Structure probing data (2A3 and DMS) for a 177-nucleotide construct. It was measured as part of the RMDB library OK2TST. The DMS profile rests on 1,068 reads.
[RMDB]
RNA sequence: GGGAACGACUCGAGUAGAGUCGAAAACGUCUCUUGUUUCAGUCUUCAUAGUUACUAUGCUUUGGCUACCUUUCCAGAGUCUGACUGAAUGUGUGGAGAGGCAGCAACCAGUGAAAACUGCACACAAUCAGGGACGAUGAUUCGUCAUCGUCCCUGAAAAAGAAACAACAACAACAAC
Reactivity to 2A3 in 0.01 (KOAc 150mM, MgCl2 10mM, bicine 150mM(pH8.5), 24C), signal-to-noise 1, nucleotides 027 to 126: c000g040u020c000u070c000u000u110g130u000u000u070c020a010g030u000c000u080u040c020a020u010a030g030u160u060a200c070u050a050u120g050c080u100u030u060g050g000c030u110a200c030c030u100u130u050c000c000a040g030a010g130u010c080u060g050a080c000u060g030a070a030u050g080u000g070u070g020g050a020g000a020g000g020c020a020g000c020a080a040c050c040a010g010u000g030a080a020a000a000c040u080g000c040a010c000a000c020a020a100
Reactivity to DMS in 0.01 (KOAc 150mM, MgCl2 10mM, bicine 150mM(pH8.5), 24C), signal-to-noise 1, nucleotides 027 to 126: c200g010u000c030u050c020u000u000g010u000u000u010c010a000g030u010c030u000u000c070a020u000a050g020u000u000a130c140u020a060u000g020c070u000u000u000g000g030c250u000a060c090c090u000u000u000c010c020a000g000a080g030u010c130u000g010a070c070u000g010a040a020u000g020u010g020u000g020g000a060g010a060g010g030c010a030g030c110a050a110c090c030a060g020u010g020a060a030a080a070c030u000g010c240a030c080a070c140a050a110